Annotation
The record gives the reactivity of an RNA of 207 nucleotides to 2A3 and DMS. For 2A3, 11,229 sequencing reads were counted. 2A3 adducts were read by reverse transcription with SuperScript II with manganese. For DMS, 5,343 sequencing reads were counted. The RNA was probed in 150 mM KOAc, 10 mM MgCl2 and 150 mM bicine (pH 8.5) at 24 C. As a SHAPE reagent, 2A3 marks flexible, mostly unpaired nucleotides at the ribose 2'-OH.
[RMDB]
RNA sequence: GGGAACGACUCGAGUAGAGUCGAAAAACCUUUGUGUUGAAGUUAAGCUUCACGGGAGCGUGAGCCUGUUCCCAUUGGGAACGCCUCACGCAUCGAUCGUGAAGGUCACACCAACACUCUGGUAAAAGUAUUUGGUGCGUUCGCGCACCAAAUACAAGAGUAACAUAUUCUUCGGAAUAUGUUACUCAAAAGAAACAACAACAACAAC
Reactivity to 2A3 in 0.01 (KOAc 150mM, MgCl2 10mM, bicine 150mM(pH8.5), 24C), signal-to-noise 7, nucleotides 027 to 156: a000c010c000u020u010u010g020u010g010u010u010g070a210a150g000u020u060a050a010g040c000u010u000c000a000c010g020g020g000a040g000c010g000u000g010a000g030c080c200u210g020u000u000c010c000c060a270u170u300g000g000g000a010a000c000g000c040c000u010c000a000c040g020c010a080u050c020g090a130u060c000g000u000g000a000a010g020g010u050c030a020c000a000c020c000a000a000c000a000c000u000c010u010g000g010u050a100a120a020a070g000u010a000u000u000u000g000g000u000g010c010g020u030u080c260g010c000g000c130a000c000c000a000a000a000u000a000c000a000a020
Reactivity to DMS in 0.01 (KOAc 150mM, MgCl2 10mM, bicine 150mM(pH8.5), 24C), signal-to-noise 2, nucleotides 027 to 156: a060c000c000u000u010u000g020u000g020u000u000g000a180a200g000u010u000a040a050g020c000u000u020c000a030c010g010g010g010a080g010c000g050u010g000a000g010c010c000u020g030u000u010c000c000c020a300u000u020g050g060g000a030a020c020g010c160c000u030c030a000c020g020c010a000u000c100g010a090u000c000g000u010g000a020a010g000g020u000c040a020c020a140c000c000a010a000c040a000c000u000c040u000g010g020u000a080a070a160a140g020u000a000u000u000u020g010g010u000g000c000g040u000u020c300g020c020g070c010a010c000c010a000a010a000u000a020c000a060a150